[RMDB]
RNA sequence: GGGAACGACUCGAGUAGAGUCGAAAAGAUAUGGAAGAGCUACCCACCUCGGUAUCGGAAACGAUACACGAGAGGUAGUCUUCCUAAGUCAAAGCAUAUCAAGAAUGUUCGCAUUCUUGAUAUGCAAGUUAGCAUGCCAGUUCGCUGGCAUGCUAACAAAAGAAACAACAACAACAAC
Reactivity to 2A3 in 0.01 (KOAc 150mM, MgCl2 10mM, bicine 150mM(pH8.5), 24C), signal-to-noise 2, nucleotides 027 to 126: g010a020u070a030u120g020g010a000a000g030a060g130c000u000a000c000c010c030a180c040c000u000c000g000g000u000a000u010c020g010g000a070a040a050c020g000a000u010a020c190a170c120g000a010g000a040g010g000u020a000g020u000c010u000u000c000c000u010a070a030g020u030c060a060a110a000g000c000a010u010a000u030c000a010a010g030a030a000u040g060u110u160c300g000c190a020u030u000c000u000u000g000a000u000a000u010g010c000a000a000
Reactivity to DMS in 0.01 (KOAc 150mM, MgCl2 10mM, bicine 150mM(pH8.5), 24C), signal-to-noise 1, nucleotides 027 to 126: g020a060u000a300u010g000g000a000a010g010a120g020c000u000a000c000c000c040a150c120c010u000c000g000g000u000a000u000c000g010g010a070a030a140c000g000a000u000a000c000a070c020g000a010g010a050g000g010u000a000g010u010c000u010u010c000c000u010a010a070g000u000c020a100a150a190g010c010a000u000a000u010c000a000a010g000a000a000u000g000u000u030c300g020c000a010u000u000c000u000u010g010a000u000a000u010g000c000a000a040
An RNA of 177 nucleotides, treated with 2A3 and DMS and read out base by base. The reactions ran in a buffer of 150 mM KOAc, 10 mM MgCl2 and 150 mM bicine (pH 8.5), at 24 C. The data come from the RNA Mapping Database (RMDB), library TTRDEL. For DMS the reverse transcriptase was MarathonRT. High 2A3 reactivity points to a flexible backbone, as in loops and unpaired stretches. For 2A3 the reverse transcriptase was SuperScript II with manganese.